[RMDB]
RNA sequence: GGGAACGACUCGAGUAGAGUCGAAAAGGGCGCGGCUGCUCCUCCUGAAAGCAGAGAGGACCCUGGUUGGCUGUGAGCAUGGUGGGCUGCCGUGUGAGUGGCAGGCAAGCAGAAAGGGGCAGAGGCCAUACUUGGACGGUUUCGACCGUCCAAGUAUAAAAGAAACAACAACAACAAC
Reactivity to DMS in 0.01 (KOAc 150mM, MgCl2 10mM, bicine 150mM(pH8.5), 24C), signal-to-noise 1, nucleotides 027 to 126: g010g000g040c060g050c080g000g000c030u010g010c040u000c010c020u020c050c020u000g000a130a110a160g010c070a050g010a110g000a100g020g000a190c070c030c030u010g010g000u000u010g030g000c020u000g020u010g020a150g010c100a050u010g000g040u030g000g000g030c020u010g000c010c020g000u010g000u030g000a180g000u010g010g000c010a020g000g010c040a030a060g000c050a070g010a070a140a080g010g000g010g000c000a050g030a170g010g010c080c060
The record gives the reactivity of an RNA of 177 nucleotides to DMS. DMS adducts were read by reverse transcription with MarathonRT. For DMS, 1,332 sequencing reads were counted. Values cover nucleotides 27 to 126. Source: RMDB library OK2TRN, as collected in RNAgym. DMS (dimethyl sulfate) methylates the pairing face of unpaired adenines and cytosines.